[RMDB]
RNA sequence: GGGAACGACUCGAGUAGAGUCGAAAAAGCGCGUAAUGUGUACAUGGGUAUUCCCCCAUAUCUGUGUACUAUAGCUGAGAGGACUUGCUUGAUAGGGGGAGCAGUGCAAGUUUGGGUGGUGCGCGAAGUGUAUAUUUAAAUUCGUUUAAAUAUACACAAAAGAAACAACAACAACAAC
Reactivity to DMS in 0.01 (KOAc 150mM, MgCl2 10mM, bicine 150mM(pH8.5), 24C), signal-to-noise 7, nucleotides 027 to 126: a120g000c010g010c020g020u010a080a060u020g010u010g000u000a010c010a010u000g000g000g010u010a020u010u010c020c000c000c010c050a300u000a000u000c000u000g030u000g000u000a000c010u020a070u030a110g010c070u010g000a160g010a080g010g000a020c010u000u000g010c010u010u010g000a130u020a090g020g010g000g010g000a010g010c040a040g010u020g000c030a020a020g000u000u000u010g000g010g010u020g000g000u010g000c000g010c030g000a060a090
Reactivity to 2A3 in 0.01 (KOAc 150mM, MgCl2 10mM, bicine 150mM(pH8.5), 24C), signal-to-noise 6, nucleotides 027 to 126: a010g030c020g000c010g020u030a030a060u120g040u020g000u030a010c000a010u010g000g000g000u010a020u040u120c000c000c000c000c000a000u000a010u000c000u010g000u000g010u000a000c000u030a020u070a020g040c050u040g030a030g030a040g060g020a020c000u010u030g030c010u030u050g050a050u180a190g020g000g000g020g000a000g020c030a010g030u080g010c000a020a030g000u030u040u060g030g010g020u100g000g020u050g010c030g000c010g010a110a040